Conditions: 150 mM KOAc, 10 mM MgCl2 and 150 mM bicine (pH 8.5), 24 C. This 177-nucleotide RNA was probed chemically with DMS. The DMS profile rests on 1,109 reads.
RNA sequence: GGGAACGACUCGAGUAGAGUCGAAAAUGAUGCUGCUGACCAAUGACGGCGAGUUGGCGCACCGGUUGAUGCAUCCCUCCCAUGAGGUGCCCAAGACGUAUCUGGCGACGGUGACGGGGUCGGUGCCUGAUAGCCCGUGUUUCGACACGGGCUAUCAAAAAGAAACAACAACAACAAC
Reactivity to DMS in 0.01 (KOAc 150mM, MgCl2 10mM, bicine 150mM(pH8.5), 24C), signal-to-noise 2, nucleotides 027 to 126: u000g010a040u010g010c030u020g010c040u000g000a150c020c020a140a060u000g000a160c060g010g010c070g040a070g000u000u020g020g030c090g010c030a030c060c040g010g020u010u020g000a070u010g030c100a190u010c000c050c000u030c050c070c020a200u000g020a030g020g010u000g000c010c040c020a030a110g020a110c110g000u020a060u000c050u000g000g020c060g020a060c060g020g020u000g000a110c090g020g000g010g030u010c080g010g030u000g000c060c090
The data come from the RNA Mapping Database (RMDB), library OK2TST.